[RMDB]
RNA sequence: GGGAACGACUCGAGUAGAGUCGAAAAGAUAUGGACGAAGGCCGAAGAACUAUCGUAACAUCAUUCGGAAACGAAUGUGGAUAGGGAGGCUACAGUCCUAAGUCAAAGCCUUUGUUCGCAAAGGCAACAAGACUCAUCACUUCGGUGAUGAGUCUUGAAAAGAAACAACAACAACAAC
Reactivity to DMS in 0.01 (KOAc 150mM, MgCl2 10mM, bicine 150mM(pH8.5), 24C), signal-to-noise 2, nucleotides 027 to 126: g050a060u000a250u010g000g000a010c000g020a210a300g000g030c000c000g000a150a060g020a120a160c030u000a000u010c000g020u010a060a140c120a110u010c000a020u000u000c000g020g000a060a070a180c010g000a020a000u000g020u010g000g020a060u000a000g000g000g020a100g040g030c040u000a030c190a300g000u000c000c000u010a030a120g000u000c030a090a030a150g010c010c000u000u000u000g010u000u030c240g050c010a000a000a000g000g000c000a090a050
Reactivity to 2A3 in 0.01 (KOAc 150mM, MgCl2 10mM, bicine 150mM(pH8.5), 24C), signal-to-noise 1, nucleotides 027 to 126: g040a010u040a020u080g000g000a010c040g060a120a050g060g010c020c050g120a160a070g000a000a020c000u030a030u040c030g150u250a090a110c010a200u300c010a010u050u010c000g080g000a070a060a030c010g000a000a020u030g000u020g060g000a010u010a020g000g030g040a030g020g000c000u040a010c030a010g010u000c020c000u000a060a000g040u010c050a140a090a090g000c000c000u010u020u010g020u050u040c120g000c180a000a000a010g010g050c000a000a020

This 177-nucleotide RNA was probed chemically with DMS and 2A3. 2A3 is a SHAPE reagent: it acylates the 2'-hydroxyl of flexible nucleotides of all four kinds. It was measured as part of the RMDB library TTRDEL. For DMS the reverse transcriptase was MarathonRT.